[RMDB]
RNA sequence: GGGAACGACUCGAGUAGAGUCGAAAAUCCCCCUCCAAGUGGCACUGUAAAACUCAGGGCGACAAAGAGAGCAGGGUUCGAGGCUUCAGUUCAUGGGGCCUGGAAGGCUGUUUUACGUGUGGGUCAGUAGAACAUCUUUAUUCGUAAAGAUGUUCUAAAAAGAAACAACAACAACAAC
Reactivity to DMS in 0.01 (KOAc 150mM, MgCl2 10mM, bicine 150mM(pH8.5), 24C), signal-to-noise 9, nucleotides 027 to 126: u010c010c000c000c060c010u000c010c010a110a210g020u010g000g000c020a040c030u000g010u020a060a060a130a140c210u020c020a040g000g010g010c020g010a050c050a070a170a110g010a070g000a050g010c020a040g000g010g010u000u000c010g010a030g000g000c000u000u000c010a030g010u020u030c260a100u000g010g010g000g010c000c000u000g000g010a030a020g000g010c010u000g000u000u010u010u010a070c140g010u000g020u000g010g000g010u010c060a100g010
Reactivity to 2A3 in 0.01 (KOAc 150mM, MgCl2 10mM, bicine 150mM(pH8.5), 24C), signal-to-noise 9, nucleotides 027 to 126: u010c010c000c000c000c000u010c020c010a180a060g030u060g120g000c020a000c020u030g040u120a030a090a150a080c040u050c030a020g020g010g010c010g030a050c030a040a150a020g150a020g010a000g010c010a010g050g090g050u010u030c040g130a000g010g000c000u010u010c010a060g060u110u080c050a070u140g000g000g010g000c000c000u020g020g010a010a000g110g020c010u010g050u020u020u060u110a080c100g050u080g020u040g080g050g030u060c040a030g040